[RMDB]
RNA sequence: GGGAACGACUCGAGUAGAGUCGAAAAAUCGUCCAUGUUGAGCACCACGUGCCACCAGCCGCCGGGCACGAAUACAGUCUCGCCUGCUCCCUGCAGCACUUCGAUGGGGCGGUAUUGCUCCGGCCAAGAUACCGAGGAUGUUCGCAUCCUCGGUAUCAAAAGAAACAACAACAACAAC
Reactivity to DMS in 0.01 (KOAc 150mM, MgCl2 10mM, bicine 150mM(pH8.5), 24C), signal-to-noise 2, nucleotides 027 to 126: a060u020c060g010u000c000c000a090u030g010u000u010g020a040g010c000a060c050c030a030c060g010u000g000c050c080a050c120c040a100g060c060c060g000c000c050g010g000g110c100a040c080g030a130a030u020a050c060a040g000u000c000u000c000g040c100c050u000g000c040u020c080c080c000u000g000c020a130g000c050a060c130u040u010c060g010a060u000g010g000g030g000c030g010g050u020a050u050u030g000c030u000c000c000g030g000c060c020a060a040
Reactivity to 2A3 in 0.01 (KOAc 150mM, MgCl2 10mM, bicine 150mM(pH8.5), 24C), signal-to-noise 4, nucleotides 027 to 126: a000u140c060g080u040c020c020a090u120g050u060u080g060a050g030c040a030c090c000a060c030g010u030g040c010c000a070c010c000a020g030c000c040g000c020c000g030g030g000c060a020c060g030a010a040u130a030c050a010g040u010c020u010c010g050c020c020u020g000c000u100c000c020c020u060g010c030a020g030c010a080c100u090u160c060g100a140u190g000g010g000g020c010g030g010u080a070u020u120g060c020u000c010c000g000g020c010c000a040a030